[RMDB]
Overview: Chemical mapping of a 207-nucleotide RNA with DMS and 2A3. The reactions ran in a buffer of 150 mM KOAc, 10 mM MgCl2 and 150 mM bicine (pH 8.5), at 24 C. DMS adducts were read by reverse transcription with MarathonRT. The DMS profile rests on 1,996 reads.
RNA sequence: GGGAACGACUCGAGUAGAGUCGAAAAGGGCCGUUCACUGGAUCCGAAGCCUCUAGAAGGAUAAUAUAGGCACUCCAUACCCUACUCCGACUCAAUACGUCCCCGUCAUACAGAAUGGUAACAUAUCGAACACAACCUAACUUCGGUUAGGUUGUAACCUAUUUGAGUAGUUCGCUACUCAAAUAGGAAAAGAAACAACAACAACAAC
Reactivity to DMS in 0.01 (KOAc 150mM, MgCl2 10mM, bicine 150mM(pH8.5), 24C), signal-to-noise 1, nucleotides 027 to 156: g010g000g000c020c020g000u010u000c030a110c090u000g050g030a080u040c010c050g000a200a270g030c020c000u000c050u010a080g000a160a030g030g000a130u000a050a090u000a180u000a070g060g010c080a060c070u010c020c050a180u010a070c020c010c020u000a060c030u000c020c000g060a070c010u000c010a150a140u010a120c040g010u010c010c040c000c000g000u020c050a100u010a170c030a070g000a090a070u010g010g020u000a130a120c060a090u000a090u000c040g020a050a090c090a100c010a010a010c010c000u000a000a010c010u000u010c300g020g000u000u000a000g000g020u000u000g010u000a010a090
Reactivity to 2A3 in 0.01 (KOAc 150mM, MgCl2 10mM, bicine 150mM(pH8.5), 24C), signal-to-noise 5, nucleotides 027 to 156: g020g010g030c090c060g130u140u090c070a020c130u060g000g030a100u250c060c040g020a040a020g020c050c000u000c040u090a270g060a300a070g110g010a080u120a230a050u140a090u120a170g010g000c020a010c040u030c000c000a030u040a080c000c010c000u010a030c030u010c050c010g000a010c000u000c010a050a130u060a130c020g020u010c030c010c000c010g080u090c050a050u100a170c020a020g120a110a080u090g000g060u090a090a010c020a080u180a080u170c060g040a110a010c010a010c000a070a000c000c000u000a000a000c000u020u030c120g050g000u000u010a000g000g000u000u000g000u000a000a000

DMS (dimethyl sulfate) methylates the pairing face of unpaired adenines and cytosines. High 2A3 reactivity points to a flexible backbone, as in loops and unpaired stretches.